Source information: The record gives the reactivity of an RNA of 207 nucleotides to 2A3. 2A3 adducts were read by reverse transcription with SuperScript II with manganese. Conditions: 150 mM KOAc, 10 mM MgCl2 and 150 mM bicine (pH 8.5), 24 C. Source: RMDB library RNAMAK, as collected in RNAgym. Reactivities are given for positions 27 through 156.
RNA sequence: GGGAACGACUCGAGUAGAGUCGAAAAUCCGCUAUACUUCGGUAUAGCGGAAAAAAACCUUUGUGCCUAGACAUGAUCGCAUGUGGACCCAUUGGGUCCCAUGGGAUCAACAGCUAGGCACUCUGGUAAAAAAUGAUCGUGGUUCGCCACGAUCAAACGAUAAGGCAAUGUUCGCAUUGCCUUAUCGAAAAGAAACAACAACAACAAC
Reactivity to 2A3 in 0.01 (KOAc 150mM, MgCl2 10mM, bicine 150mM(pH8.5), 24C), signal-to-noise 1, nucleotides 027 to 156: u000c000c010g000c010u000a000u000a000c010u000u060c160g040g000u000a000u000a000g000c000g000g070a000a000a000a000a000a000a000c030c000u020u000u000g000u010g000c020c000u020a050g010a140c050a160u020g030a020u010c040g070c300a010u030g180u300g080g000a030c010c050c050a300u120u300g020g000g010u000c000c000c000a000u000g020g010g000a000u000c000a000a000c000a010g030c000u000a000g000g030c000a000c000u000c000u000g000g000u100a090a090a000a030a030a060u100g000a000u010c000g000u020g000g150u060u140c300g030c080c000a000c000g000a000u010c000a000a000a020